[RMDB]
RNA sequence: GGGAACGACUCGAGUAGAGUCGAAAAGUGGAUGCAGCACUUGUAAAUGUAAAUGCUUGCUACUAGUGUAACUUUUAAAACAGGGUACCUGUUUUAAAAUUCAAGCUAUGCUUGAAUUUACUUAAGCCUCCUCCGAUAAUUUCGAUUAUCGGAGGAGAAAAGAAACAACAACAACAAC
Reactivity to 2A3 in 0.01 (KOAc 150mM, MgCl2 10mM, bicine 150mM(pH8.5), 24C), signal-to-noise 1, nucleotides 027 to 126: g030u030g020g030a110u210g070c030a110g070c010a050c010u060u070g070u170a150a300a210u140g010u030a020a020a000u050g040c010u020u030g000c000u050a040c050u040a040g050u030g040u070a040a060c010u000u000u000u020a010a020a000a010c000a020g150g000g000u100a190c030c000u000g000u000u000u000u010a010a010a020a000u000u050c010a030a000g040c050u080a020u220g000c000u030u000g010a030a000u010u000u000a020c000u060u080a090a070g050c010
Reactivity to DMS in 0.01 (KOAc 150mM, MgCl2 10mM, bicine 150mM(pH8.5), 24C), signal-to-noise 2, nucleotides 027 to 126: g020u000g000g000a100u000g040c120a120g030c010a020c050u020u000g010u000a030a110a110u000g000u000a020a020a030u000g010c000u020u000g000c030u020a080c220u000a030g010u000g010u000a150a290c140u000u000u000u000a000a000a000a000c000a010g000g000g010u020a090c080c010u000g000u000u000u000u000a000a000a020a040u000u000c040a070a300g000c000u020a020u010g010c000u000u000g000a050a010u000u000u000a000c030u010u010a090a160g000c150

Chemical mapping of a 177-nucleotide RNA with 2A3 and DMS. Values cover nucleotides 27 to 126. High DMS reactivity at an A or C suggests that its Watson-Crick edge is free. For 2A3 the reverse transcriptase was SuperScript II with manganese. DMS adducts were read by reverse transcription with MarathonRT.